About this RNA
An RNA of 207 nucleotides, treated with 2A3 and read out base by base. The RNA was probed in 150 mM KOAc, 10 mM MgCl2 and 150 mM bicine (pH 8.5) at 24 C. For 2A3, 583 sequencing reads were counted. 2A3 adducts were read by reverse transcription with SuperScript II with manganese. The data come from the RNA Mapping Database (RMDB), library VIROID.
RNA sequence: GGGAACGACUCGAGUAGAGUCGAAAACCGGCUCAUCUCGGCUAGAGGCGGCAGUCCUCAGUACUCUUACUCUUUUCUGUAAAGAGGAGACUGCUGGACUCGCCGCCCGAGCCCGAGCCUGAGCCAAGUUCCGAGCGAGGAGACGCGGGGGAAGGAUCCAAUCAUCAUCGUUCGCGAUGAUGAUUGGAAAAGAAACAACAACAACAAC
Reactivity to 2A3 in 0.01 (KOAc 150mM, MgCl2 10mM, bicine 150mM(pH8.5), 24C), signal-to-noise 1, nucleotides 027 to 156: c010c030g010g010c010u010c010a070u030c030u000c000g000g000c020u090a050g010a300g060g000c000g000g000c000a010g000u010c000c000u020c040a040g000u250a300c040u040c040u110u110a220c000u050c010u010u270u150u060c270u240g280u290a040a000a000g010a000g020g000a000g030a000c000u000g060c070u000g020g000a000c000u040c080g000c000c000g010c000c000c000g000a000g080c010c040c000g030a020g000c000c070u020g000a000g000c030c010a010a040g030u010u070c050c030g030a060g050c000g010a030g040g000a000g030a030c030g000c020g060g010g010g010g000a000a100g050g010a040u030